[RMDB]
RNA sequence: GGGAACGACUCGAGUAGAGUCGAAAAUAGCCGUUAUGCGCGAAGCGGUGUAGCGUCACUUUGAUGGCGGUACUACGAAUUGAUGCAAGGUGUGGAGCGACCUUAAACAGUUCUGGUGGUGCUCUGAAAAACAAAUAGGCGUUCGCGCCUAUUUGAAGAAUAAUAUGAGGUUCGCCUCAUAUUAUUCAAAAGAAACAACAACAACAAC
Reactivity to DMS in 0.01 (KOAc 150mM, MgCl2 10mM, bicine 150mM(pH8.5), 24C), signal-to-noise 1, nucleotides 027 to 156: u020a110g040c020c010g010u000u010a020u020g030c030g070c050g000a120a140g000c000g010g010u010g030u000a070g010c010g030u000c030a030c070u000u000u000g030a160u010g030g020c000g030g020u020a070c020u010a130c020g010a040a080u000u000g030a060u020g010c080a090a080g070g000u010g000u000g010g000a110g010c000g010a150c020c030u000u000a100a050a080c080a140g020u010u000c070u010g030g030u010g000g000u000g020c030u000c040u000g000a050a040a070a080a120c000a020a030a010u000a020g000g020c000g040u000u000c300g030c020g010c000c000u000a000u000u000u000g000a090a100
Reactivity to 2A3 in 0.01 (KOAc 150mM, MgCl2 10mM, bicine 150mM(pH8.5), 24C), signal-to-noise 6, nucleotides 027 to 156: u090a010g020c010c000g040u070u060a080u150g030c050g010c010g050a040a010g010c020g040g020u020g020u050a020g070c010g010u020c020a020c080u180u190u220g190a260u110g060g020c020g040g070u020a040c020u020a020c010g040a060a060u060u060g060a070u110g060c020a040a010g010g000u040g020u070g040g010a030g020c030g010a020c000c000u070u110a080a140a010c020a060g000u040u030c010u050g040g020u020g010g040u030g020c010u000c020u070g050a100a070a010a020a020c000a000a000a000u000a000g000g020c010g020u040u040c180g020c000g000c070c000u000a000u000u010u010g000a010a000